This 177-nucleotide RNA was probed chemically with DMS and 2A3. The reactions ran in a buffer of 150 mM KOAc, 10 mM MgCl2 and 150 mM bicine (pH 8.5), at 24 C. Reactivities are given for positions 27 through 126. For DMS the reverse transcriptase was MarathonRT.
RNA sequence: GGGAACGACUCGAGUAGAGUCGAAAAGAUGCUGAUAUUGGAGUGCAUCUGAGGCUGUUGUAGAAAUAACAUGGGUUGUUGAUUACAACAUUGCCAAUGAUUAUAACCCAAGAACAGCUCACCUAACUAGUCACAUUACAUUCGUGUAAUGUGACUAAAAAGAAACAACAACAACAAC
Reactivity to DMS in 0.01 (KOAc 150mM, MgCl2 10mM, bicine 150mM(pH8.5), 24C), signal-to-noise 8, nucleotides 027 to 126: g020a050u020g020c000u000g010a040u030a180u010u000g000g010a140g020u020g020c150a020u010c000u000g000a300g000g000c000u010g010u010u000g010u000a020g000a150a040a020u010a010a020c020a230u030g030g020g020u000u010g010u000u000g010a200u030u000a020c000a020a010c010a030u050u030g020c010c010a020a220u010g000a010u000u020a110u020a120a060c030c000c020a020a020g000a080a300c010a020g000c000u000c050a160c010c010u000a080a090c240
Reactivity to 2A3 in 0.01 (KOAc 150mM, MgCl2 10mM, bicine 150mM(pH8.5), 24C), signal-to-noise 9, nucleotides 027 to 126: g030a030u160g000c000u010g010a040u030a060u290u020g040g020a260g050u060g020c020a010u000c000u010g020a020g020g000c020u010g010u000u000g000u010a020g060a060a050a010u070a020a020c080a180u300g290g220g010u030u020g010u000u010g050a180u080u040a000c000a010a000c000a010u050u190g000c000c000a000a010u020g000a000u010u040a090u080a130a070c000c000c000a000a000g010a060a010c000a000g000c010u010c010a060c010c000u010a060a040c060